[RMDB]
RNA sequence: GGGAACGACUCGAGUAGAGUCGAAAAGACCGCUGAAUGCGGAAGUACUAGAUCAACUAGAAAGUAGAUGAAUACAAAAGCUACGUCUCGAAACUAGUUGAUCUAGUCCAAUCGAGACGUAGAAAGACACUGAUCAUGCGUUCGCGCAUGAUCAGUGAAAAGAAACAACAACAACAAC
Reactivity to 2A3 in 0.01 (KOAc 150mM, MgCl2 10mM, bicine 150mM(pH8.5), 24C), signal-to-noise 2, nucleotides 027 to 126: g110a050c000c000g000c060u160g300a300a030u300g000c000g000g000a010a020g160u100a000c000u000a000g030a070u000c000a010a010c020u000a020g000a030a240a000g100u140a060g100a160u300g300a180a030u250a080c190a090a150a000a000g140c000u000a000c000g000u000c000u000c000g010a130a000a000c000u000a000g000u000u000g000a000u000c000u000a000g000u020c000c000a000a030u030c010g000a000g000a000c020g000u000a000g110a110a090a000g090a000
Reactivity to DMS in 0.01 (KOAc 150mM, MgCl2 10mM, bicine 150mM(pH8.5), 24C), signal-to-noise 1, nucleotides 027 to 126: g020a060c010c000g010c000u030g070a140a160u080g000c000g040g000a120a050g000u000a150c080u000a030g000a000u000c000a000a030c000u000a040g000a210a140a070g000u070a180g000a080u040g000a160a160u010a120c120a050a000a200a140g000c050u000a000c000g000u000c030u000c000g000a020a100a080c000u000a000g000u000u000g020a040u000c000u040a010g000u010c070c000a060a070u000c000g000a030g000a030c010g040u000a000g010a010a070a000g000a200
Structure probing data (2A3 and DMS) for a 177-nucleotide construct.
Conditions: 150 mM KOAc, 10 mM MgCl2 and 150 mM bicine (pH 8.5), 24 C.
Reactivities are given for positions 27 through 126.
For DMS, 1,343 sequencing reads were counted.
The 2A3 profile rests on 1,036 reads.
In probing experiments dimethyl sulfate is read out at A N1 and C N3, which are open when not base-paired.
It was measured as part of the RMDB library OK1LIB.